The record gives the reactivity of an RNA of 177 nucleotides to 2A3 and DMS. It was measured as part of the RMDB library M2PK90.

RNA sequence: GGGAACGACUCGAGUAGAGUCGAAAAUAUUAUAGCGCACUAAAGACGCUGAUCUUUAGUUACCUAGGAACUUUAGUGCUGAGGUCCGAGUUCCAAGGUCCCAUGUCGGACCUUAGCACUAAUUGAACUAGUGGCAACUAUUCGUAGUUGCCACUAGAAAAGAAACAACAACAACAAC
Reactivity to 2A3 in 0.01 (KOAc 150mM, MgCl2 10mM, bicine 150mM(pH8.5), 24C), signal-to-noise 2, nucleotides 027 to 126: u150a000u160u300a130u100a150g100c020g000c020a000c030u020a020a010a000g010a020c040g070c300u150g070a280u030c010u030u010u010a040g010u010u060a090c010c000u040a010g010g070a040a130c020u040u020u010a010g000u010g000c000u000g010a010g000g010u000c000c000g000a020g090u150u130c040c040a000a000g050g010u020c000c020c010a010u080g060u000c010g010g000a010c010c010u000u000a000g010c010a000c000u000a000a000u000u060g020a040a010
Reactivity to DMS in 0.01 (KOAc 150mM, MgCl2 10mM, bicine 150mM(pH8.5), 24C), signal-to-noise 2, nucleotides 027 to 126: u010a070u010u010a160u000a040g040c070g020c230a010c010u000a020a000a020g000a040c010g030c260u010g010a090u000c000u000u000u000a010g000u030u000a140c220c020u000a030g030g010a160a110c130u000u000u010a020g000u000g010c000u000g020a010g000g010u000c000c000g040a050g000u000u000c190c170a060a100g020g000u010c000c000c000a140u020g010u000c020g000g010a020c000c000u000u000a000g000c000a000c000u000a010a000u000u000g000a090a160
The 2A3 profile rests on 1,273 reads.